An RNA of 170 nucleotides, treated with DMS and 2A3 and read out base by base.

[RMDB]
RNA sequence: GGGAACGACUCGAGUAGAGUCGAAAAAGGGCUUUCCUUCUUCGGUGAGCCCGCCUCUCCUCGUCGGUGAAGUCUCCCGCGCGGGUCCUCUUCCUAGGUCCGGAAUCAACCUCCAUCCGAUCUGUCCAUGGGCUAGCGUUCGCGCUAGCCAAAAGAAACAACAACAACAAC
Reactivity to DMS in 0.01 (KOAc 150mM, MgCl2 10mM, bicine 150mM(pH8.5), 24C), signal-to-noise 4, nucleotides 027 to 129: a060g030g020g010c020u010u030u060c090c040u070u110c220u080u040c230g030g010u040g020a030g020c060c000c100g020c050c040u020c050u010c000c000u000c030g090u040c040g020g040u020g040a100a110g040u010c030u020c000c040c030g060c050g050c000g040g000g000u030c050c050u040c040u000u000c020c020u040a110g020g060u020c080c080g020g050a000a000u060c140a120a300c110c020u030c010c090a160u040c050c030g050a070u010c070u000g010u000c030c060a120u050g020
Reactivity to 2A3 in 0.01 (KOAc 150mM, MgCl2 10mM, bicine 150mM(pH8.5), 24C), signal-to-noise 3, nucleotides 027 to 129: a000g000g000g000c000u030u020u000c020c000u100u230c110u170u150c100g000g000u030g000a020g000c010c010c000g000c000c030u040c000u000c000c000u010c010g160u020c080g080g050u040g020a030a000g010u000c020u000c000c010c000g010c000g000c000g010g000g010u050c000c000u010c000u040u010c000c010u020a040g000g000u000c030c040g010g040a010a030u110c010a050a090c000c010u030c020c000a060u000c010c020g020a060u030c000u020g070u040c070c010a060u110g040
The reactions ran in a buffer of 150 mM KOAc, 10 mM MgCl2 and 150 mM bicine (pH 8.5), at 24 C. The 2A3 profile rests on 8,482 reads. For 2A3 the reverse transcriptase was SuperScript II with manganese. DMS (dimethyl sulfate) methylates the pairing face of unpaired adenines and cytosines. The data come from the RNA Mapping Database (RMDB), library 15KLIB. As a SHAPE reagent, 2A3 marks flexible, mostly unpaired nucleotides at the ribose 2'-OH.